[RMDB]
RNA sequence: GGGAACGACUCGAGUAGAGUCGAAAAAUACAUACUGACACCGGUGGCUCAACAGGCUGUGUGGGACAAUAGAAUAACAAGGCUGUCAAUUUGAGCUUGACGGCUGCAAACCGAAUGGAGUGAAAUCGUAACCGGACUCACUUCGGUGAGUCCGGAAGAUACUCUAUUAGUUCGCUAAUAGAGUAUCAAAAGAAACAACAACAACAAC
Reactivity to DMS in 0.01 (KOAc 150mM, MgCl2 10mM, bicine 150mM(pH8.5), 24C), signal-to-noise 1, nucleotides 027 to 156: a180u000a160c000a080u010a120c060u020g010a030c050a080c030c050g050g000u010g010g040c060u000c040a070a130c130a100g000g000c020u000g000u000g000u000g010g000g010a080c030a060a070u010a100g010a040a130u010a100a080c080a100a170g030g030c010u000g000u000c030a010a020u000u010u000g000a110g050c300u010u000g140a030c040g010g000c010u000g020c050a050a090a070c030c000g030a020a160u000g000g020a100g000u010g000a030a090a140u000c030g020u010a070a120c050c000g090g000a090c030u000c000a020c000u010u000c300g030g030u010g030a010g010u010c000c040g000g010a000a000